RNA sequence: GGGAACGACUCGAGUAGAGUCGAAAACAUCUGUGGAAACCGUCCCGGGGCAGAUAGUGAAAUAAUGACUGCUGCGUGCUUGAGAUCUGGGAAAGAGGCCACAUCAUAAGUGCACUGAAAUCAGAGAACCUAGCUAGGAUUUCGAUCCUAGCUAGGUAAAAGAAACAACAACAACAAC
Reactivity to DMS in 0.01 (KOAc 150mM, MgCl2 10mM, bicine 150mM(pH8.5), 24C), signal-to-noise 2, nucleotides 027 to 126: c080a090u010c040u000g040u010g020g000a130a090a090c050c050g010u000c000c000c020g000g000g020g000c050a020g010a060u000a050g030u010g010a090a120a130u000a070a080u040g000a100c020u000g000c020u000g010c040g010u010g000c070u030u000g020a160g010a060u010c080u000g000g020g010a000a090a190g000a170g000g010c000c010a010c070a030u000c030a040u020a030a060g010u010g000c080a050c040u000g000a030a060a070u000c040a060g010a100g000a170
Reactivity to 2A3 in 0.01 (KOAc 150mM, MgCl2 10mM, bicine 150mM(pH8.5), 24C), signal-to-noise 2, nucleotides 027 to 126: c000a030u040c040u030g020u050g040g110a160a080a030c020c000g030u020c010c000c000g010g000g030g010c010a010g010a070u110a050g080u070g160a120a080a120u280a060a140u270g100a020c030u020g000c000u030g010c030g010u040g000c020u090u060g080a060g000a100u010c010u030g000g020g040a050a080a040g160a030g030g030c010c000a010c000a010u040c000a010u040a170a020g070u040g060c010a010c030u020g030a090a030a050u070c010a010g010a040g030a140